[RMDB]
RNA sequence: GGGAACGACUCGAGUAGAGUCGAAAAGACAAAUGCAGCAUAUUAGGCUAAGCAGGAAAGGGACGGUAGCUCCUGGUGUCAGUUCAUACGGUGUGAUGCAUGUGCGUCGUGCACACAUGCACCCAAACUCUCAAGUCAAAUUCGUUUGACUUGAGAGAAAAGAAACAACAACAACAAC
Reactivity to 2A3 in 0.01 (KOAc 150mM, MgCl2 10mM, bicine 150mM(pH8.5), 24C), signal-to-noise 5, nucleotides 027 to 126: g060a000c030a020a070a010u110g030c020a020g000c010a030u060a130u300u190a110g100g000c010u040a060a030g040c010a010g060g050a090a070a030g050g020g020a010c030g040g020u060a020g020c040u020c010c020u030g030g020u030g020u050c050a050g030u060u090c030a050u090a150c080g010g020u040g010u050g090a080u030g000c050a030u020g010u020g030c030g060u150c060g080u120g000c010a010c000a000c000a020u020g020c000a040c000c000c010a020a050a090
Reactivity to DMS in 0.01 (KOAc 150mM, MgCl2 10mM, bicine 150mM(pH8.5), 24C), signal-to-noise 6, nucleotides 027 to 126: g000a070c080a040a090a110u000g020c030a040g020c040a080u010a110u000u000a090g010g000c040u010a080a100g010c030a050g010g000a060a070a070g000g010g010a050c070g000g020u010a080g010c060u000c010c020u000g000g010u000g000u000c040a040g000u000u000c050a060u000a090c170g000g010u010g010u000g000a070u000g010c010a010u000g000u000g010c050g010u000c190g010u010g000c100a060c010a010c020a000u000g010c020a060c010c010c030a050a090a160